The data come from the RNA Mapping Database (RMDB), library M2PK50.
The record gives the reactivity of an RNA of 177 nucleotides to 2A3 and DMS.
For DMS, 3,744 sequencing reads were counted.
The RNA was probed in 150 mM KOAc, 10 mM MgCl2 and 150 mM bicine (pH 8.5) at 24 C.
RNA sequence: GGGAACGACUCGAGUAGAGUCGAAAAGGGUUAGCGUUCGCGCUAACCCCAGGAUCGAACAUGUCAUAUCUCGCAGACAUGAAACGAUCAAAAGCGAGAAAACUAGACAGUCAUUCGUGACUGUCAAUCAUUAGCUCCAUUUCGAUGGAGCUAAUGAAAAAGAAACAACAACAACAAC
Reactivity to 2A3 in 0.01 (KOAc 150mM, MgCl2 10mM, bicine 150mM(pH8.5), 24C), signal-to-noise 4, nucleotides 027 to 126: g000g000g000u010u020a010g010c010g010u030u040c250g000c010g010c110u000a010a000c010c010c000c000a050g070g090a060u050c020g020a040a040c000a000u010g010u010c020a050u060a170u210c060u020c090g020c050a010g010a010c000a010u010g010a080a030a000c050g010a020u100c020a030a130a030a010g030c040g000a050g000a030a090a040a070c100u070a060g000a000c000a000g010u020c000a010u050u100c160g100u030g000a000c000u000g010u000c000a000a030
Reactivity to DMS in 0.01 (KOAc 150mM, MgCl2 10mM, bicine 150mM(pH8.5), 24C), signal-to-noise 4, nucleotides 027 to 126: g010g010g000u000u000a000g000c010g050u000u020c230g020c010g020c000u000a000a000c000c010c010c040a030g000g000a070u010c020g030a140a300c020a010u010g010u000c000a070u010a080u000c030u010c020g030c040a150g010a010c000a000u000g000a050a070a090c080g010a050u000c140a010a040a110a060g010c030g000a020g010a040a110a100a080c220u000a160g000a020c000a020g010u000c000a040u000u000c240g020u000g000a030c000u010g010u000c000a050a070